Structure probing data (2A3 and DMS) for a 177-nucleotide construct.
In probing experiments dimethyl sulfate is read out at A N1 and C N3, which are open when not base-paired.
For DMS, 14,666 sequencing reads were counted.
For DMS the reverse transcriptase was MarathonRT.
High 2A3 reactivity points to a flexible backbone, as in loops and unpaired stretches.
Conditions: 150 mM KOAc, 10 mM MgCl2 and 150 mM bicine (pH 8.5), 24 C.
For 2A3 the reverse transcriptase was SuperScript II with manganese.
[RMDB]
RNA sequence: GGGAACGACUCGAGUAGAGUCGAAAAGGAGGCUAUUAGCCUUCCUGAUGAGUCCGUUCCAAGGACGAAACCGUCUCUCCUGACUCCCGGUUCUGGUUAGGUCUGUGUAUCCCUACCAGUUACUUCCGAAAGAAUCAUUGUUCGCAAUGAUUCUUUCAAAAGAAACAACAACAACAAC
Reactivity to 2A3 in 0.01 (KOAc 150mM, MgCl2 10mM, bicine 150mM(pH8.5), 24C), signal-to-noise 4, nucleotides 027 to 126: g000g000a010g010g010c030u090a160u300u270a220g010c010c000u060u130c000c010u020g010a070u120g010a010g010u040c100c040g000u080u000c060c030a060a050g030g010a020c040g020a120a020a000c050c020g040u010c010u000c000u000c020c040u050g070a080c030u020c010c000c020g040g000u050u020c010u020g040g000u070u140a020g010g030u020c070u090g150u030g050u120a110u090c010c000c000u020a020c000c000a000g010u040u040a040c030u100u050c040c030
Reactivity to DMS in 0.01 (KOAc 150mM, MgCl2 10mM, bicine 150mM(pH8.5), 24C), signal-to-noise 8, nucleotides 027 to 126: g010g010a040g010g010c010u000a150u010u020a060g010c010c000u000u010c000c010u000g010a100u000g010a160g010u000c040c050g020u000u010c070c070a130a120g000g010a050c050g000a070a060a100c080c030g000u010c030u000c040u000c020c020u000g000a150c090u000c010c050c020g010g000u010u000c010u000g010g010u010u000a030g010g000u000c080u000g000u010g010u000a110u000c090c010c010u000a050c030c020a030g010u010u000a040c070u000u010c130c110